[RMDB]
RNA sequence: GGGAACGACUCGAGUAGAGUCGAAAAUGACGUCGUUUCGACGACGUCAACAUAAAAUCAGCGGUAAAUAAUUAGGAGGCGUUACCGCUCAACGCCUCCAUACGAGAGGGCUAUUCGUAGCCCUCAAGCUAUUCUACUAGUUCGCUAGUAGAAUAGCAAAAGAAACAACAACAACAAC
Reactivity to DMS in 0.01 (KOAc 150mM, MgCl2 10mM, bicine 150mM(pH8.5), 24C), signal-to-noise 6, nucleotides 027 to 126: u000g010a010c000g010u000c000g020u000u000u020c220g010a030c010g010a010c010g010u000c000a020a060c150a090u000a060a060a090a100u010c100a030g020c030g010g010u000a070a080a050u010a070a100u010u000a130g010g000a020g000g010c000g010u000u000a090c030c050g000c040u000c070a060a010c000g000c000c000u000c000c020a040u000a020c260g010a150g000a010g000g010g010c000u000a030u000u010c180g020u000a010g010c000c000c000u000c000a000a050
Reactivity to 2A3 in 0.01 (KOAc 150mM, MgCl2 10mM, bicine 150mM(pH8.5), 24C), signal-to-noise 9, nucleotides 027 to 126: u060g010a000c000g000u000c000g000u000u050u130c220g080a020c000g010a000c000g000u000c000a000a010c010a020u190a010a100a020a090u120c040a020g040c020g080g060u110a070a120a080u150a080a210u200u250a130g000g000a000g000g000c000g010u010u030a080c020c020g030c030u020c020a000a000c000g000c000c000u000c000c000a020u090a010c090g020a070g000a000g040g010g000c000u010a020u040u100c160g050u010a000g010c000c000c000u000c000a000a000
Chemical mapping of a 177-nucleotide RNA with DMS and 2A3. 2A3 adducts were read by reverse transcription with SuperScript II with manganese. Source: RMDB library M2PK50, as collected in RNAgym. Conditions: 150 mM KOAc, 10 mM MgCl2 and 150 mM bicine (pH 8.5), 24 C.